[RMDB]
Conditions: 150 mM KOAc, 10 mM MgCl2 and 150 mM bicine (pH 8.5), 24 C. This 177-nucleotide RNA was probed chemically with DMS and 2A3. DMS adducts were read by reverse transcription with MarathonRT.
RNA sequence: GGGAACGACUCGAGUAGAGUCGAAAAGAAGAGAGUCGACGCAAGCGACGAUAACUGCGGAACGGUAACCGUAGUACCGUACGGUCAUGGCACGCGAAAGCGAAAGACCGAAGCAUGCCAUAAGAGAAAUCAUCCCAUCAUUCGUGAUGGGAUGAUUAAAAGAAACAACAACAACAAC
Reactivity to DMS in 0.01 (KOAc 150mM, MgCl2 10mM, bicine 150mM(pH8.5), 24C), signal-to-noise 4, nucleotides 027 to 126: g000a070a090g010a070g000a130g000u000c040g010a110c070g010c110a080a110g010c050g000a040c030g010a100u010a110a050c010u030g010c000g000g010a100a070c090g020g000u020a080a060c050c030g000u000a010g010u000a070c040c010g010u010a170c040g000g030u010c100a060u020g000g000c040a100c070g020c020g010a090a180a070g000c030g000a070a070a090g000a100c000c010g010a110a180g000c050a020u000g000c000c020a020u020a070a100g030a100g000a060
Reactivity to 2A3 in 0.01 (KOAc 150mM, MgCl2 10mM, bicine 150mM(pH8.5), 24C), signal-to-noise 3, nucleotides 027 to 126: g200a090a000g030a020g020a000g040u090c020g030a000c020g020c200a020a110g040c030g030a060c070g010a020u100a140a020c010u030g030c010g040g000a120a000c040g030g050u080a130a080c000c000g020u030a000g030u010a030c000c010g030u040a030c020g030g000u080c010a040u010g010g000c080a000c070g000c000g080a120a080a000g010c030g060a090a040a040g090a020c000c000g000a040a020g000c030a020u020g000c010c000a010u060a090a120g150a000g080a040